Structure probing data (DMS and 2A3) for a 207-nucleotide construct. The 2A3 profile rests on 3,107 reads. Values cover nucleotides 27 to 156. For 2A3 the reverse transcriptase was SuperScript II with manganese.
RNA sequence: GGGAACGACUCGAGUAGAGUCGAAAAAUUUGAUCAGACACCUAUCUCGCGUGGAUUAAAUACGUCACUUAGCAGUUACGCUAAUACCGUCACUUCUCUUGAUGAUAUUUUUUCACUGCUGCUCGGUAUCGCGUUAGAGAAACCCGUUACUCAACGGCAGAGGUUUAAAUUUCGAUUUAAACCUCUGAAAAGAAACAACAACAACAAC
Reactivity to DMS in 0.01 (KOAc 150mM, MgCl2 10mM, bicine 150mM(pH8.5), 24C), signal-to-noise 3, nucleotides 027 to 156: a120u000u010u000g000a120u000c000a130g010a100c020a060c030c020u000a070u000c030u000c070g030c070g030u010g030g000a100u010u000a050a050a070u000a040c000g020u000c040a050c080u000u000a060g010c020a040g000u000u010a040c050g000c080u000a050a080u000a070c110c010g020u000c040a050c060u000u000c090u000c060u000u000g030a050u000g010a070u000a000u000u000u010u000u000u000c040a080c060u010g030c010u000g020c010u000c090g010g020u010a050u000c040g020c010g050u010u010a120g020a130g010a100a110a120c050c020c020g030u000u000a130c090u010c050a060a060c050g010g020
Reactivity to 2A3 in 0.01 (KOAc 150mM, MgCl2 10mM, bicine 150mM(pH8.5), 24C), signal-to-noise 4, nucleotides 027 to 156: a010u150u110u180g050a040u070c050a020g030a070c010a030c040c010u050a040u060c050u040c070g020c020g010u020g020g030a050u100u110a030a060a010u050a020c020g010u010c010a020c120u030u060a000g010c020a020g020u020u030a010c020g000c010u010a020a010u040a110c010c020g000u000c020a010c020u050u020c000u010c000u030u010g020a040u010g060a040u060a070u040u040u010u000u010u010c020a020c060u120g050c010u010g010c020u050c030g020g000u050a060u070c060g010c030g110u030u060a060g010a010g040a090a020a020c010c010c010g000u000u010a080c060u080c110a030a010c010g010g000